[RMDB]
Annotation: Structure probing data (2A3) for a 207-nucleotide construct. For 2A3, 1,606 sequencing reads were counted. Values cover nucleotides 27 to 156. The data come from the RNA Mapping Database (RMDB), library VIROID. Conditions: 150 mM KOAc, 10 mM MgCl2 and 150 mM bicine (pH 8.5), 24 C.
RNA sequence: GGGAACGACUCGAGUAGAGUCGAAAAUCUUCUCAGAAUCCAGCGGGGGCGUGGAGAGAGGGCCGCGGUGCUCUGGAGUAGAGGCUCUGCCUUCGAAACACCAUCGAUCGUCCCUUCUUCUUUACCUUCUUCUGGCUCUUCCGAUGGAGACGCGACCGGAAGUGAAAUUGUUCGCAAUUUCACUUCCAAAAGAAACAACAACAACAAC
Reactivity to 2A3 in 0.01 (KOAc 150mM, MgCl2 10mM, bicine 150mM(pH8.5), 24C), signal-to-noise 2, nucleotides 027 to 156: u000c000u000u000c000u000c000a000g030a030a030u300c000c000a000g000c020g000g000g000g000g000c140g020u020g010g000a000g000a000g000a010g020g000g000c000c000g010c000g040g000u000g000c020u020c010u020g010g000a000g010u010a000g000a000g010g000c040u100c230u300g020c030c000u210u150c010g000a010a000a000c010a010c120c040a000u000c000g040a300u020c000g000u000c000c000c000u040u030c000u000u020c000u000u000u000a000c000c010u030u060c000u000u030c010u010g000g000c010u000c000u000u000c000c000g020a040u300g030g000a020g000a010c050g030c110g080a050c020c060